[RMDB]
RNA sequence: GGGAACGACUCGAGUAGAGUCGAAAAGAUAUGGAUUGGUUGGUAAGACAGUUGUUCGGAAACGAAUACAACAAUGACGCCAUCAAUCCUAAGUCAAAAGUCGGGAUUGGUUCGCCAAUCCCGACAACCUUCUAAAUGAGUUCGCUCAUUUAGAAGGAAAAGAAACAACAACAACAAC
Reactivity to DMS in 0.01 (KOAc 150mM, MgCl2 10mM, bicine 150mM(pH8.5), 24C), signal-to-noise 5, nucleotides 027 to 126: g000a010u000a120u020g000g000a010u000u000g020g010u020u020g030g030u000a120a150g020a110c120a180g000u000u000g020u000u000c010g010g000a040a020a050c010g020a030a070u010a050c010a020a020c030a070a100u010g020a140c230g010c000c000a010u000c000a000a010u000c000c000u000a020a080g000u000c020a090a100a070a120g000u000c010g020g010g000a020u000u010g000g010u000u020c260g020c000c020a020a000u000c000c000c000g010a000c000a010a040
Reactivity to 2A3 in 0.01 (KOAc 150mM, MgCl2 10mM, bicine 150mM(pH8.5), 24C), signal-to-noise 5, nucleotides 027 to 126: g000a000u010a000u050g010g000a020u000u020g050g140u140u210g000g020u140a280a130g160a100c050a020g010u030u010g010u000u020c000g000g010a010a010a010c010g000a020a020u210a120c010a010a000c020a050a190u250g090a090c140g010c010c000a000u000c000a000a000u000c000c000u000a010a000g010u000c010a010a030a060a200g010u000c010g000g010g000a000u000u020g040g050u060u240c280g050c040c000a000a000u010c000c000c000g000a000c000a000a000

The record gives the reactivity of an RNA of 177 nucleotides to DMS and 2A3. Source: RMDB library TTRDEL, as collected in RNAgym. The DMS profile rests on 5,954 reads. Conditions: 150 mM KOAc, 10 mM MgCl2 and 150 mM bicine (pH 8.5), 24 C. The 2A3 profile rests on 12,829 reads.